[RMDB]
RNA sequence: GGGAACGACUCGAGUAGAGUCGAAAAUCUGUUUACUAGGAAUCGUUAAGUCCAACUCUGACUACGAUUCCGCAAACAGAAGGGAGUUUGCGUCAAGUCCGAGUUGGACUUGAGACAGGACUGAUCACUACUCGAAUGAAUUCGUUCAUUCGAGUAGAAAAGAAACAACAACAACAAC
Reactivity to 2A3 in 0.01 (KOAc 150mM, MgCl2 10mM, bicine 150mM(pH8.5), 24C), signal-to-noise 5, nucleotides 027 to 126: u030c020u020g040u070u140u120a170c120u090a070g040g090a090a060u040c030g030u050u080a030a010g010u000c010c010a030a030c030u030c020u030g010a010c010u050a080c130g110a100u150u000c030c000g000c000a010a010a000c020a020g130a090a090g050g070g020a080g000u010u030u040g050c020g040u030c040a040a010g000u000c010c020g020a030g010u040u040g010g000a000c000u000u000g000a000g000a010c020a010g050g020a010c020u050g030a080u090c050a020
Reactivity to DMS in 0.01 (KOAc 150mM, MgCl2 10mM, bicine 150mM(pH8.5), 24C), signal-to-noise 9, nucleotides 027 to 126: u000c040u000g000u000u000u020a090c110u010a140g020g010a070a080u000c040g010u000u000a020a020g000u000c010c100a030a060c090u000c060u010g000a020c000u000a110c140g010a060u010u000c170c020g000c030a000a010a010c000a040g000a140a110g000g000g000a100g010u000u000u000g010c030g000u000c050a070a020g010u000c000c090g000a090g010u010u000g020g010a010c000u000u000g000a040g000a060c040a070g000g000a150c030u000g000a100u000c150a220